[RMDB]
RNA sequence: GGGAACGACUCGAGUAGAGUCGAAAAAGAAUCAGGGCUACAAAGGUAUGAAAUAACUAAUGGAUUCGAUAAAUUUGUGCCAUCGAGUGAUGAGUUAACCCAAGACACAACUACUAACUUUCGAUUACGUGGUAUUCAAGUUAGCGCUAAAGAUGCACCUCUGUCACAUUUUCGAAUGUGACAGAGGAAAAGAAACAACAACAACAAC
Reactivity to 2A3 in 0.01 (KOAc 150mM, MgCl2 10mM, bicine 150mM(pH8.5), 24C), signal-to-noise 2, nucleotides 027 to 156: a000g050a000a040u050c020a070g040g020g000c060u080a030c090a060a080a030g090g000u110a080u180g040a060a060a100u150a160a020c090u130a110a000u090g040g050a050u010u050c040g010a030u050a050a100a090u050u070u090g040u040g050c000c010a030u060c040g050a000g070u060g020a090u090g010a020g010u060u060a030a040c000c010c000a050a040g060a040c070a000c020a050a120c010u070a010c000u000a030a030c000u010u160u150c060g040a040u000u050a040c110g040u070g110g000u040a030u030u020c050a060a050g020u030u000a060g010c010g040c100u110a090a100a040g010a030u140g030c030a010
Reactivity to DMS in 0.01 (KOAc 150mM, MgCl2 10mM, bicine 150mM(pH8.5), 24C), signal-to-noise 1, nucleotides 027 to 156: a050g000a050a090u000c010a110g000g000g000c080u000a080c040a090a150a190g000g000u010a030u010g000a170a060a110u000a050a120c090u000a120a050u000g000g000a170u000u000c050g030a100u000a050a050a170u010u000u040g030u010g040c000c000a110u000c010g010a150g010u000g160a140u010g010a110g010u010u000a130a040c010c040c010a030a100g020a120c030a010c020a020a060c100u000a030c020u000a000a000c050u010u000u010c130g020a040u000u000a070c150g040u030g000g000u000a040u000u000c010a010a070g010u000u000a070g000c090g000c060u020a080a100a120g000a050u010g000c030a170

Source: RMDB library OK3TST, as collected in RNAgym.
Chemical mapping of a 207-nucleotide RNA with 2A3 and DMS.
DMS adducts were read by reverse transcription with MarathonRT.
High DMS reactivity at an A or C suggests that its Watson-Crick edge is free.
The RNA was probed in 150 mM KOAc, 10 mM MgCl2 and 150 mM bicine (pH 8.5) at 24 C.